RNA sequence: GGGAACGACUCGAGUAGAGUCGAAAACUCUUUAACUAAUGAUGCCUAUUCACGAUUUUUGGGGUUGUUUAACAAGUAUAAGUACUUCUCUGGUGCUAUGGAAACAGCCGCUUAUCGUGAAGCUGCAGCUGAAAAGUAUGUUCGCAUACUUUUCAGCAAAAGAAACAACAACAACAAC
Reactivity to DMS in 0.01 (KOAc 150mM, MgCl2 10mM, bicine 150mM(pH8.5), 24C), signal-to-noise 2, nucleotides 027 to 126: c060u010c040u020u030u000a150a110c160u010a130a080u000g000a120u000g020c030c060u000a160u000u000c000a000c010g010a030u000u010u010u000u010g010g010g010g010u000u000g000u000u000u000a050a070c060a000a110g020u000a060u000a080a020g040u000a030c150u010u020c260u000c120u000g010g010u010g010c030u000a050u000g020g000a040a030a010c000a000g030c000c010g010c000u010u010a000u000c000g020u000g000a020a050g000c260u010g010c050a100
Reactivity to 2A3 in 0.01 (KOAc 150mM, MgCl2 10mM, bicine 150mM(pH8.5), 24C), signal-to-noise 2, nucleotides 027 to 126: c000u000c000u090u090u080a090a050c060u090a150a080u160g110a040u100g000c020c020u050a080u070u010c000a000c000g000a010u000u040u030u100u250g050g050g030g000u030u000g000u030u070u020a160a060c040a060a040g040u060a060u040a160a020g000u010a040c050u140u150c090u010c050u180g040g000u020g000c010u030a060u110g000g030a020a040a000c010a000g000c010c040g170c120u010u020a010u000c010g000u000g010a000a000g000c000u030g000c030a030